[RMDB]
RNA sequence: GGGAACGACUCGAGUAGAGUCGAAAACUUGGAGAUCUGCCUGUUUACGAGGAUGUUGAGUACGUUCUUAGCGAGGUGGAAACUGUAACAAGAACAAUAUUCAAUGAUAAAAAGGUGCCAAUAAUGCAUACGUAUCGCAUUUCGAUGCGAUACGUAUAAAAGAAACAACAACAACAAC
Reactivity to 2A3 in 0.01 (KOAc 150mM, MgCl2 10mM, bicine 150mM(pH8.5), 24C), signal-to-noise 4, nucleotides 027 to 126: c010u040u100g060g000a120g060a080u040c060u040g070c010c000u060g060u080u090u160a110c090g020a030g160g020a060u180g020u030u030g030a030g010u020a030c090g000u000u000c000u010u040a020g040c050g080a050g060g020u070g050g140a090a070a010c020u080g030u180a060a000c020a030a070g010a020a010c000a040a140u040a030u070u060c020a030a070u060g110a060u240a050a100a030a020a000g020g030u040g050c000c000a080a070u190a130a050u220g100c120
Reactivity to DMS in 0.01 (KOAc 150mM, MgCl2 10mM, bicine 150mM(pH8.5), 24C), signal-to-noise 3, nucleotides 027 to 126: c050u030u020g010g000a100g020a090u010c100u010g000c020c000u030g010u020u000u020a100c130g000a130g010g010a110u050g010u020u010g000a080g030u000a010c150g000u000u000c010u020u000a110g010c090g000a110g000g030u000g050g010a120a090a030c010u020g000u050a270a100c080a000a020g020a030a010c040a060a180u010a050u010u000c020a010a050u010g010a060u020a030a030a030a100a050g010g020u000g010c010c040a040a060u060a090a050u030g040c090